[RMDB]
RNA sequence: GGGAACGACUCGAGUAGAGUCGAAAACGGUCUGUUCCUCAGGCUUUUGACAUCUGCCCACACCUGGAACAUCUUAAAUUCUGGUGGAGAAUACAAAACGUCACUCCCCUGCCCCAGCUCACCCCUACCUGAAUGCUAUUUUCGAAUAGCAUUCAGGAAAAGAAACAACAACAACAAC
Reactivity to DMS in 0.01 (KOAc 150mM, MgCl2 10mM, bicine 150mM(pH8.5), 24C), signal-to-noise 3, nucleotides 027 to 126: c130g020g020u010c020u000g030u000u010c030c010u000c120a110g010g010c060u010u000u020u000g000a070c100a060u000c050u000g000c050c010c050a120c050a040c030c030u000g050g020a100a040c070a100u030c110u000u000a040a110a140u000u010c040u010g010g060u000g020g000a130g000a100a060u000a070c100a050a030a070a100c150g000u010c090a060c030u010c010c000c010c040u000g010c020c030c000c010a070g020c070u000c050a150c040c010c020c050u000a100
Reactivity to 2A3 in 0.01 (KOAc 150mM, MgCl2 10mM, bicine 150mM(pH8.5), 24C), signal-to-noise 2, nucleotides 027 to 126: c040g020g030u060c030u080g020u050u060c020c000u050c040a030g070g000c000u090u110u030u100g060a100c000a090u030c010u100g000c010c000c000a050c000a010c020c030u040g070g030a060a040c020a090u060c040u110u240a180a200a150u140u020c000u060g090g000u040g030g060a070g020a080a030u200a100c070a040a100a060a020c080g050u010c010a000c070u050c010c000c000c000u010g060c010c010c000c000a020g000c020u010c000a050c000c000c000c000u000a080